[RMDB]
RNA sequence: GGGAACGACUCGAGUAGAGUCGAAAACUAGGCAGUGUUGCAGCUCGAGCGGGAUGCACAGAGAACUGGUCACGACCGGGAAGUCCUUGCUCGAGGAUGAAGAGUCAAGGGCUCUGCGACACGUGACGCGGCUAGCUAGCUUCGGCUAGUUAGCCGCAAAAGAAACAACAACAACAAC
Reactivity to 2A3 in 0.01 (KOAc 150mM, MgCl2 10mM, bicine 150mM(pH8.5), 24C), signal-to-noise 3, nucleotides 027 to 126: c040u040a050g100g000c040a040g020u010g000u030u000g010c010a040g070c010u000c000g020a010g000c010g030g000g030a010u080g070c100a030c080a100g220a030g010a130a070c030u050g020g010u000c000a020c170g140a030c030c000g000g010g010a080a010g020u020c010c030u100u300g000c000u000c000g010a020g000g010a040u090g090a060a060g010a000g030u100c100a080a170g100g070g000c000u000c000u030g000c010g000a000c000a010c010g050u040g030a030c110
Reactivity to DMS in 0.01 (KOAc 150mM, MgCl2 10mM, bicine 150mM(pH8.5), 24C), signal-to-noise 2, nucleotides 027 to 126: c040u000a130g010g000c050a050g010u000g000u000u000g040c000a180g000c000u000c000g030a040g040c060g000g010g000a020u000g000c180a180c200a090g000a160g060a020a100c090u000g000g000u000c040a140c230g030a060c030c010g000g000g000a060a200g000u000c000c000u000u090g100c000u000c000g010a050g000g000a050u020g000a130a030g000a050g050u000c050a140a120g020g000g000c020u000c000u030g040c000g020a000c130a000c000g000u000g000a010c140